[RMDB]
Annotation:
An RNA of 177 nucleotides, treated with DMS and 2A3 and read out base by base. Reactivities are given for positions 27 through 126. 2A3 adducts were read by reverse transcription with SuperScript II with manganese. The 2A3 profile rests on 4,874 reads.
RNA sequence: GGGAACGACUCGAGUAGAGUCGAAAAGAUAUGGAGUCCUGGCAGCGCAUGUCUAAGCUCGGAAACGAGAACGCGACAUGAACUACGCUGAGGGACUCCUAAGUCAAAAGCACUGUUCGCAGUGCAAUCACUAACGAAUCUUCGGAUUCGUUAGUGAAAAAGAAACAACAACAACAAC
Reactivity to DMS in 0.01 (KOAc 150mM, MgCl2 10mM, bicine 150mM(pH8.5), 24C), signal-to-noise 3, nucleotides 027 to 126: g010a010u010a300u010g000g010a000g010u010c000c010u010g000g010c040a010g010c020g000c010a000u000g010u010c000u020a210a090g000c010u010c000g010g000a100a080a190c000g000a010g020a030a040c070g000c160g000a000c000a020u000g000a120a080c150u000a240c030g030c000u000g010a300g000g000g000a000c010u000c000c000u000a010a010g000u000c070a060a030a170a070g010c000a010c000u020g010u010u000c210g020c010a000g020u010g000c000a050a030
Reactivity to 2A3 in 0.01 (KOAc 150mM, MgCl2 10mM, bicine 150mM(pH8.5), 24C), signal-to-noise 2, nucleotides 027 to 126: g010a000u070a040u120g000g020a000g000u020c030c010u080g280g300c010a000g000c020g020c030a000u020g000u020c020u100a100a040g010c010u000c020g030g000a070a100a040c020g010a000g020a140a090c060g030c050g060a000c010a020u010g020a050a040c140u250a020c120g000c010u030g040a010g000g000g000a000c010u000c000c000u000a000a000g000u000c010a000a040a100a050g000c000a000c010u010g050u110u140c300g030c110a010g000u000g010c000a000a020